Structure probing data (2A3 and DMS) for a 207-nucleotide construct. DMS adducts were read by reverse transcription with MarathonRT. Values cover nucleotides 27 to 156. The 2A3 profile rests on 4,687 reads.

RNA sequence: GGGAACGACUCGAGUAGAGUCGAAAAGGGGUCAUAGAAAUGUGCUCCAUAGAGAGCAACAGCCUACCUGAAGCCUCCACGGGUAGGACAUGCUCGAUUGUGGAGCGAAUCUAUGACGGAGGCACCCAAAAGAAUACGUGCUUCGGCACGUAUUCAAGGUAUCUCAUGGAUUCGUCCAUGAGAUACCAAAAGAAACAACAACAACAAC
Reactivity to 2A3 in 0.01 (KOAc 150mM, MgCl2 10mM, bicine 150mM(pH8.5), 24C), signal-to-noise 4, nucleotides 027 to 156: g050g000g050g000u020c010a010u000a010g070a030a170a150u300g090u200g090c000u000c000c000a000u040a000g130a000g000a000g010c090a090a080c090a120g020c000c000u000a000c000c000u030g040a140a020g000c000c000u000c000c010a010c010g010g010g000u000a010g000g020a000c000a090u270g000c000u000c020g200a210u090u180g030u040g010g000a010g000c000g010a010a000u000c000u000a000u000g010a000c010g000g000a000g000g000c010a050c010c010c000a030a150a020a060g010a010a000u040a000c010g000u010g000c000u060u070c190g090g000c000a000c000g000u000a000u000u000c000a000a020
Reactivity to DMS in 0.01 (KOAc 150mM, MgCl2 10mM, bicine 150mM(pH8.5), 24C), signal-to-noise 2, nucleotides 027 to 156: g010g040g000g010u000c030a020u010a020g020a070a080a120u010g100u020g020c000u000c000c010a110u020a120g000a270g000a070g010c010a080a110c080a170g000c000c000u000a030c000c010u040g000a030a170g000c010c020u010c000c030a300c070g000g010g010u010a010g040g000a030c050a110u010g000c000u000c020g010a260u000u020g080u010g000g030a040g020c020g020a110a130u010c010u000a040u000g000a070c000g050g010a010g000g060c040a150c020c010c020a050a070a170a180g010a020a040u000a010c010g020u010g030c010u000u000c300g070g000c000a000c010g010u000a000u010u000c000a040a100